Notes: This 177-nucleotide RNA was probed chemically with 2A3 and DMS. Source: RMDB library VIROID, as collected in RNAgym. 2A3 adducts were read by reverse transcription with SuperScript II with manganese. The DMS profile rests on 903 reads. For 2A3, 1,396 sequencing reads were counted. The reactions ran in a buffer of 150 mM KOAc, 10 mM MgCl2 and 150 mM bicine (pH 8.5), at 24 C.
RNA sequence: GGGAACGACUCGAGUAGAGUCGAAAACCACCUUGGGGUGCCCUAUUCGGAGCACUGCAGUUCCCGAUAGAAAGGCUAAGCACUUCGCAAUGAAGUAAGGUGGGACUUUUCCUUCGGGAACCAAGCGCUAACCUUACCUGUUCGCAGGUAAGGUUAGAAAAGAAACAACAACAACAAC
Reactivity to 2A3 in 0.01 (KOAc 150mM, MgCl2 10mM, bicine 150mM(pH8.5), 24C), signal-to-noise 1, nucleotides 027 to 126: c010c000a060c000c010u100u090g130g030g000g000u010g000c050c000c000u150a300u120u260c150g050g020a090g000c010a020c030u040g030c020a010g000u000u000c030c000c000g010a000u010a020g050a020a030a000g080g000c180u230a060a030g020c020a020c050u000u000c010g080c210a230a300u300g000a020a020g050u080a060a070g120g030u030g030g020g030a130c000u000u000u030u020c000c000u000u000c000g000g070g010a020a020c020c000a030a010g000c080g000
Reactivity to DMS in 0.01 (KOAc 150mM, MgCl2 10mM, bicine 150mM(pH8.5), 24C), signal-to-noise 1, nucleotides 027 to 126: c050c000a130c120c070u010u000g050g030g010g000u010g000c010c010c000u020a170u020u010c160g000g000a090g010c000a010c020u010g000c160a300g000u000u000c000c000c000g030a010u000a050g020a080a040a000g000g020c020u000a140a240g030c110a040c010u000u000c000g020c160a160a120u000g010a030a040g000u000a070a080g000g010u010g000g000g030a110c000u020u010u000u000c000c030u000u000c000g020g010g000a020a010c020c030a050a120g010c180g010